[RMDB]
RNA sequence: GGGAACGACUCGAGUAGAGUCGAAAAGGAGAUCGAAGAUGACCGACGUCAGCACGGUCUGGAUGUAGGUCCGCAUGCAUCCAAGUUGACGAAACUUUACGAUUUCCAAAGCGGACAAGAAGUCAAACGUAAAUGCGUGGUUCGCCACGCAUUUACGAAAAGAAACAACAACAACAAC
Reactivity to DMS in 0.01 (KOAc 150mM, MgCl2 10mM, bicine 150mM(pH8.5), 24C), signal-to-noise 1, nucleotides 027 to 126: g060g010a050g000a010u000c000g000a160a180g120a120u010g000a000c000c050g000a170c130g000u040c140a030g190c120a070c020g000g000u000c050u000g000g000a000u000g150u000a050g010g000u000c000c000g000c010a060u000g000c000a000u000c060c050a080a050g000u000u000g000a210c230g040a110a000a030c050u000u000u000a190c060g000a050u000u030u000c000c010a100a000a060g000c040g040g030a060c000a200a000g000a150a130g000u000c010a000a060a230
Reactivity to 2A3 in 0.01 (KOAc 150mM, MgCl2 10mM, bicine 150mM(pH8.5), 24C), signal-to-noise 2, nucleotides 027 to 126: g030g000a000g010a000u020c030g040a100a050g040a230u150g030a050c020c030g030a070c070g150u210c170a060g080c130a000c080g000g000u000c000u000g000g000a000u000g040u000a000g000g000u000c000c010g000c000a000u010g000c000a000u000c000c000a020a020g000u000u020g030a060c130g040a020a080a000c020u050u040u060a050c000g000a000u010u000u000c000c000a000a050a050g000c000g000g000a000c050a040a050g150a110a000g100u130c040a030a000a050